[RMDB]
An RNA of 177 nucleotides, treated with DMS and 2A3 and read out base by base.
Values cover nucleotides 27 to 126.
The RNA was probed in 150 mM KOAc, 10 mM MgCl2 and 150 mM bicine (pH 8.5) at 24 C.

RNA sequence: GGGAACGACUCGAGUAGAGUCGAAAAAUCAUUAGUGCUUACAGCAGCUAUUCUUUCAAUAGUUUUCCUAGGCUACCUUGCAGGAGUCCGUGAAGGAACCAUAAUUUCAGCUGUAAUAAUUGGGCCAGCCUGAUUAAUAUUUCGAUAUUAAUCAGGCAAAAGAAACAACAACAACAAC
Reactivity to DMS in 0.01 (KOAc 150mM, MgCl2 10mM, bicine 150mM(pH8.5), 24C), signal-to-noise 5, nucleotides 027 to 126: a050u030c110a060u020u020a060g020u020g010c100u000u010a030c060a020g020c010a110g000c030u010a060u000u000c080u030u030u030c080a060a080u020a040g010u010u010u000u010c010c020u010a110g010g000c000u010a060c060c030u000u030g030c170a110g000g000a060g000u010c040c090g010u010g000a060a060g010g010a070a060c200c080a120u030a060a070u010u000u020c110a050g020c010u010g000u000a040a030u020a090a090u020u000g000g000g000c030c060a170
Reactivity to 2A3 in 0.01 (KOAc 150mM, MgCl2 10mM, bicine 150mM(pH8.5), 24C), signal-to-noise 9, nucleotides 027 to 126: a000u110c060a050u090u160a040g050u060g130c030u070u030a040c030a030g020c000a000g000c020u040a060u090u040c060u090u150u110c080a090a110u070a090g040u030u050u080u050c010c000u010a050g040g000c010u090a280c030c010u060u160g070c070a040g010g050a040g050u050c020c020g050u070g120a070a030g020g020a020a040c030c020a120u110a270a130u100u110u130c050a020g000c010u010g000u010a020a040u070a060a040u110u050g040g010g020c000c010a020
In probing experiments dimethyl sulfate is read out at A N1 and C N3, which are open when not base-paired.